Annotation: An RNA of 177 nucleotides, treated with 2A3 and read out base by base. The 2A3 profile rests on 539 reads. The reactions ran in a buffer of 150 mM KOAc, 10 mM MgCl2 and 150 mM bicine (pH 8.5), at 24 C.

RNA sequence: GGGAACGACUCGAGUAGAGUCGAAAAGGCACUGACAUGGAGGCCGCGUACCAGCACACCUUUGUGUACCUGCGCCAGCUGGCCAUCUACCUGCGUGCAGCGUUGCAGCAGCAGACGCAGAGCAACGAGCUCCUCGGACGUUCGCGUCCGAGGAGCUAAAAGAAACAACAACAACAAC
Reactivity to 2A3 in 0.01 (KOAc 150mM, MgCl2 10mM, bicine 150mM(pH8.5), 24C), signal-to-noise 1, nucleotides 027 to 126: g030g000c080a000c170u050g030a090c000a100u160g020g030a000g110g000c050c000g000c000g010u040a090c000c040a100g000c080a000c000a000c000c020u070u180u120g090u000g060u090a110c000c060u010g000c090g010c010c000a000g000c010u100g010g050c020c000a000u000c020u060a150c000c000u000g000c010g040u000g040c000a000g010c030g040u000u080g030c010a010g040c000a000g050c000a000g050a020c020g000c010a000g010a000g030c010a030a030c010g020

2A3 adducts were read by reverse transcription with SuperScript II with manganese.